This 177-nucleotide RNA was probed chemically with DMS. Reactivities are rounded to 0.1 and cut off at 0 and 3. For DMS the reverse transcriptase was MarathonRT.
[RMDB]
RNA sequence: GGGAACGACUCGAGUAGAGUCGAAAAGAAAGAAAGAAAGCUCUGAAAAAGGCAAACCCGUCGAAAGGCGGGGACGCAAAAUCACCGGUCUACAGGGGUCGCCCCAUGACAGCGGGAUUGCCAGGAACUCACGGCAUAUAUUCGUAUAUGCCGUGAGAAAAGAAACAACAACAACAAC
Reactivity to DMS in 0.01 (KOAc 150mM, MgCl2 10mM, bicine 150mM(pH8.5), 24C), signal-to-noise 2, nucleotides 027 to 126: g000a030a110a160g010a110a060a130g010a180a110a100g040c060u000c010u000g030a010a050a060a060a090g010g000c000a200a250a160c000c000c000g000u000c000g010a020a050a080g000g000c000g000g000g000g000a010c090g000c020a090a080a070a060u000c000a030c000c010g010g000u000c000u010a030c300a150g040g000g000g040u050c300g000c000c000c000c000a020u020g000a020c070a040g030c010g000g000g000a040u040u000g000c050c020a040g020g010a100a130
It was measured as part of the RMDB library RFM100.
Values cover nucleotides 27 to 126.
Conditions: 150 mM KOAc, 10 mM MgCl2 and 150 mM bicine (pH 8.5), 24 C.